[RMDB]
RNA sequence: GGGAACGACUCGAGUAGAGUCGAAAAUAGGAUCAGUGUCAUGCAGUGUAUCAUGUAUGGUACCGCUCUAGGAUCUGACUAGACUGUCAUGCUCAUGACAGGAUCUGCUAGGAUCGAUCGAUCGAUCGUCACUUAGGGCAUUCGUGCCCUAAGUGACAAAAGAAACAACAACAACAAC
Reactivity to DMS in 0.01 (KOAc 150mM, MgCl2 10mM, bicine 150mM(pH8.5), 24C), signal-to-noise 4, nucleotides 027 to 126: u020a130g000g010a020u000c000a070g000u000g000u000c010a000u010g000c100a020g040u010g030u000a040u000c080a080u000g010u000a080u010g000g010u000a010c020c100g010c170u000c010u000a050g020g010a120u010c150u000g010a120c060u000a010g010a100c010u000g010u010c140a040u010g010c150u000c130a050u000g010a020c000a020g000g020a030u000c060u020g000c110u020a100g030g010a070u000c010g000a050u000c150g010a130u010c050g000a040u000c040
Reactivity to 2A3 in 0.01 (KOAc 150mM, MgCl2 10mM, bicine 150mM(pH8.5), 24C), signal-to-noise 3, nucleotides 027 to 126: u210a040g050g030a000u010c040a020g190u040g000u020c000a000u010g020c050a000g050u030g020u240a070u120c070a070u130g090u210a060u080g010g000u020a010c020c000g020c020u040c020u060a040g070g040a120u030c090u090g030a060c000u000a000g010a030c000u000g020u070c030a040u180g010c040u070c140a030u010g000a000c000a000g000g020a010u040c040u040g030c040u070a100g100g010a000u020c020g010a040u060c100g030a070u060c030g020a090u040c080